RNA sequence: GGGAACGACUCGAGUAGAGUCGAAAAAAAGGCUUAUCAAGAGAGGUGGAGCGACUGGCCCGAUGAAACCCGGCAGCCAGAAAUGGUGCCAAUUUCUGCAGCGGAAACGUUGAAAGAUGAGCCGAAAUCUCUCUACAUAGUUCGCUAUGUAGAGAGAAAAAGAAACAACAACAACAAC
Reactivity to DMS in 0.01 (KOAc 150mM, MgCl2 10mM, bicine 150mM(pH8.5), 24C), signal-to-noise 2, nucleotides 027 to 126: a080a040a100g040g020c000u000u000a010u000c030a130a070g020a060g020a050g020g050u000g000g020a080g000c000g000a080c060u010g000g000c000c030c040g010a130u020g010a050a100a080c160c150c020g000g000c070a100g020c000c000a000g000a030a110a080u020g020g000u000g030c000c030a090a040u000u000u000c030u000g010c030a020g030c000g010g010a150a030a080c040g040u000u000g010a060a090a080g000a020u000g000a040g010c000c020g000a040a070a140
Reactivity to 2A3 in 0.01 (KOAc 150mM, MgCl2 10mM, bicine 150mM(pH8.5), 24C), signal-to-noise 1, nucleotides 027 to 126: a000a000a010g000g000c020u030u010a000u020c010a040a040g030a010g080a080g070g040u020g020g040a080g040c020g040a030c020u010g000g000c020c020c040g000a020u210g090a090a050a060c020c020c000g060g010c060a040g010c010c010a010g030a050a100a040u080g020g030u120g010c000c050a010a010u000u050u000c020u040g030c020a010g000c000g000g000a040a030a010c030g000u020u030g030a120a040a030g010a000u000g000a010g000c000c010g030a010a010a000
Chemical mapping of a 177-nucleotide RNA with DMS and 2A3. For DMS, 1,448 sequencing reads were counted. 2A3 adducts were read by reverse transcription with SuperScript II with manganese. The RNA was probed in 150 mM KOAc, 10 mM MgCl2 and 150 mM bicine (pH 8.5) at 24 C.